[RMDB]
RNA sequence: GGGAACGACUCGAGUAGAGUCGAAAAGAUGUGGCCAAGAACUGGGAUUUUAUUCUCUGCAAUAGGAAAUUAUUGCAGGACUAUAAGCUGUGAGUGACAUUUUCCUAUUUUAAGUUUGUAUAAAGAUUGCUAUGGCCUCUGGGUGGAGAUGGGAACAAUUAGAUCUAGACUUCGGUCUAGAUCUAAUAAAAGAAACAACAACAACAAC
Reactivity to DMS in 0.01 (KOAc 150mM, MgCl2 10mM, bicine 150mM(pH8.5), 24C), signal-to-noise 1, nucleotides 027 to 156: g020a110u000g020u030g020g030c020c020a090a120g020a100a100c060u000g020g000g010a100u000u010u020u020a030u010u010c030u010c030u020g010c040a040a020u010a050g000g000a080a110a130u010u000a040u000u010g020c000a020g010g010a050c090u000a090u000a070a190g010c030u010g020u000g020a130g040u000g010a130c100a050u000u020u000u000c020c020u000a130u000u000u010u010a030a180g000u000u000u000g020u010a100u010a100a120a170g010a120u000u010g000c040u000a120u010g010g020c010c050u000c030u010g000g010g010u050g000g000a070g000a110u020g000g020g010a050a110c070a050
Reactivity to 2A3 in 0.01 (KOAc 150mM, MgCl2 10mM, bicine 150mM(pH8.5), 24C), signal-to-noise 1, nucleotides 027 to 156: g040a120u100g000u020g030g000c040c020a080a020g060a060a010c100u100g040g070g000a030u140u070u070u120a080u220u090c060u030c020u020g000c020a000a010u010a070g000g100a070a070a050u160u040a010u030u030g000c010a010g010g010a030c040u070a030u080a300a050g030c010u000g000u020g060a040g040u020g050a020c020a100u070u100u130u010c000c000u070a140u020u110u020u020a090a070g000u040u060u100g040u020a080u030a090a140a000g090a100u070u030g010c050u050a090u070g010g000c000c020u020c040u030g050g000g030u130g000g000a160g000a070u120g010g000g020a020a000c020a100

Structure probing data (DMS and 2A3) for a 207-nucleotide construct. The data come from the RNA Mapping Database (RMDB), library OK3TST. The reactions ran in a buffer of 150 mM KOAc, 10 mM MgCl2 and 150 mM bicine (pH 8.5), at 24 C. 2A3 adducts were read by reverse transcription with SuperScript II with manganese. The DMS profile rests on 2,118 reads.